[RMDB]
Source: RMDB library OK1LIB, as collected in RNAgym. An RNA of 177 nucleotides, treated with DMS and 2A3 and read out base by base. 2A3 adducts were read by reverse transcription with SuperScript II with manganese. The reactions ran in a buffer of 150 mM KOAc, 10 mM MgCl2 and 150 mM bicine (pH 8.5), at 24 C. The DMS profile rests on 1,495 reads.
RNA sequence: GGGAACGACUCGAGUAGAGUCGAAAAGAAAAUACGCGUGCGUUUUGCAGUGCAUACGAAGUGUGCGCGGAAAGAAAACUAGAAAAUAGGAAAACUGUGAAACGCGAAAAAGCCGAAAGGCGAAAAAGGCUAUGUUAAACUUCGGUUUAACAUAGCCAAAAGAAACAACAACAACAAC
Reactivity to DMS in 0.01 (KOAc 150mM, MgCl2 10mM, bicine 150mM(pH8.5), 24C), signal-to-noise 1, nucleotides 027 to 126: g000a050a080a030a070u030a010c150g080c120g000u000g000c010g040u000u000u000u000g000c000a020g000u000g020c010a040u120a000c030g070a110a110g040u000g020u030g000c000g000c080g000g020a090a100a080g030a120a050a150a190c010u000a050g000a130a040a130a180u000a020g000g000a060a080a120a000c000u010g000u000g000a000a000a000c050g020c000g000a050a120a040a100a140g000c060c000g000a090a010a030g030g030c040g000a000a160a100a070a070
Reactivity to 2A3 in 0.01 (KOAc 150mM, MgCl2 10mM, bicine 150mM(pH8.5), 24C), signal-to-noise 2, nucleotides 027 to 126: g150a020a030a020a000u230a020c050g030c050g210u150g000c000g000u020u040u000u020g000c000a000g010u060g030c000a020u120a050c090g240a270a040g050u010g070u050g000c010g000c020g050g010a040a100a000g090a000a120a000a060c000u020a040g080a010a300a010a080u080a010g000g060a040a060a040a000c000u000g000u000g020a010a010a010c000g000c000g050a100a060a020a020a000g030c020c000g050a110a070a000g060g000c140g060a080a050a000a000a000